[RMDB]
An RNA of 177 nucleotides, treated with 2A3 and DMS and read out base by base. 2A3 adducts were read by reverse transcription with SuperScript II with manganese. The RNA was probed in 150 mM KOAc, 10 mM MgCl2 and 150 mM bicine (pH 8.5) at 24 C. DMS adducts were read by reverse transcription with MarathonRT.
RNA sequence: GGGAACGACUCGAGUAGAGUCGAAAAGAGUACGAGCCGGGACAUGCCGGAGUCACUGCGUACGUUCUGAAGAACGGGCCAGGGAGUGUACGGCAGGGGCGAGGCUAAGGAGUGAAACUCCGAAGCCCACAAGCAGUCGUUUCGACGACUGCUUGUGAAAAGAAACAACAACAACAAC
Reactivity to 2A3 in 0.01 (KOAc 150mM, MgCl2 10mM, bicine 150mM(pH8.5), 24C), signal-to-noise 6, nucleotides 027 to 126: g070a010g030u120a060c070g010a010g000c000c000g050g050g100a140c090a130u090g010c010c010g020g030a040g030u010c000a000c020u030g010c040g070u040a030c000g000u010u010c030u120g300a300a220g010a030a010c010g020g000g020c010c020a010g030g000g000a080g020u100g020u060a000c000g030g000c000a010g050g000g000g000c040g010a020g000g000c000u040a050a010g020g000a010g000u210g100a130a090a050c000u000c000c000g000a030a010g000c000c000
Reactivity to DMS in 0.01 (KOAc 150mM, MgCl2 10mM, bicine 150mM(pH8.5), 24C), signal-to-noise 5, nucleotides 027 to 126: g010a100g000u010a070c060g000a130g010c050c010g010g000g020a160c150a150u000g000c000c010g000g010a180g000u030c020a060c020u000g000c140g000u010a060c010g010u000u000c000u000g060a190a130g000a020a010c010g000g020g000c030c000a030g000g000g000a020g040u020g010u020a180c000g000g020c010a030g010g000g000g000c070g000a120g000g010c000u030a050a300g010g010a000g010u000g000a130a070a300c000u000c000c000g000a230a080g000c000c010